[RMDB]
RNA sequence: GGGAACGACUCGAGUAGAGUCGAAAAUAUGAAGAUGAUGAGGAUGGAGAACUGUACCACGGCCAGGGCCGCACCUUUUCCGAGGUCGAGGGUGCCGGUGAACGCGGUGUAGUAGGUGUACACCGAGGAAUUUACACCGAUUCGUCGGUGUAAAUUCAAAAGAAACAACAACAACAAC
Reactivity to DMS in 0.01 (KOAc 150mM, MgCl2 10mM, bicine 150mM(pH8.5), 24C), signal-to-noise 4, nucleotides 027 to 126: u010a090u010g010a080a070g000a070u000g010a070u000g010a050g000g010a090u010g000g010a100g020a070a070c120u000g000u000a080c060c030a080c060g020g020c040c060a100g020g010g010c030c020g000c060a050c030c010u000u000u000u010c100c080g010a060g020g010u010c060g010a070g000g000g000u000g010c070c060g020g000u000g010a070a140c150g020c020g010g000u000g010u000a010g020u000a050g010g010u000g000u000a020c040a020c000c000g000a100g010
Reactivity to 2A3 in 0.01 (KOAc 150mM, MgCl2 10mM, bicine 150mM(pH8.5), 24C), signal-to-noise 3, nucleotides 027 to 126: u280a090u100g070a050a040g060a070u100g020a020u050g010a010g040g010a020u100g050g020a080g020a090a030c040u060g020u090a050c000c030a030c040g000g040c030c030a070g020g030g000c030c030g000c010a030c010c000u070u100u070u000c050c050g060a080g040g040u040c030g010a040g020g020g010u010g040c040c030g020g010u080g030a030a020c060g000c010g050g000u030g000u020a050g010u010a030g000g120u140g040u060a010c020a010c000c010g000a030g040

The record gives the reactivity of an RNA of 177 nucleotides to DMS and 2A3. Source: RMDB library OK2TST, as collected in RNAgym. Values are in units of 0.01, from 0 to 300, in steps of 10.